[RMDB]
RNA sequence: GGGAACGACUCGAGUAGAGUCGAAAACCGGUAGCGGUGUCCGACGGCCGCAAUCGCAAGGCCGGCGGCAAUGAACGGCCGCCCGGCCGGAUGAACCGGUGGAACGGCGGACCGCACCAGGGCGAGCGAAGCCUAGUGGGUUCGCCCACUAGGCUUCAAAAGAAACAACAACAACAAC
Reactivity to 2A3 in 0.01 (KOAc 150mM, MgCl2 10mM, bicine 150mM(pH8.5), 24C), signal-to-noise 2, nucleotides 027 to 126: c000c000g000g000u080a120g000c010g010g050u060g150u070c000c020g000a040c000g080g020c000c000g020c050a000a180u060c060g010c100a070a050g000g030c020c040g020g020c020g000g040c020a000a050u190g060a090a050c120g030g000c010c030g020c060c070c000g000g000c100c010g000g000a030u090g020a030a050c150c020g000g010u050g020g100a230a070c000g000g000c000g010g000a000c000c000g010c000a000c000c000a080g000g060g010c130g000a080g050c080
Reactivity to DMS in 0.01 (KOAc 150mM, MgCl2 10mM, bicine 150mM(pH8.5), 24C), signal-to-noise 2, nucleotides 027 to 126: c000c000g000g050u030a090g020c000g000g010u000g010u000c020c000g000a050c000g040g010c000c000g020c080a070a060u020c010g050c120a190a110g000g000c000c000g010g030c020g060g030c040a020a010u000g060a290a130c300g000g000c000c000g020c090c000c040g030g030c000c000g000g080a240u020g030a090a140c260c080g000g010u000g020g000a070a150c060g000g000c020g010g000a060c000c000g000c020a020c020c000a090g010g000g000c060g020a160g010c230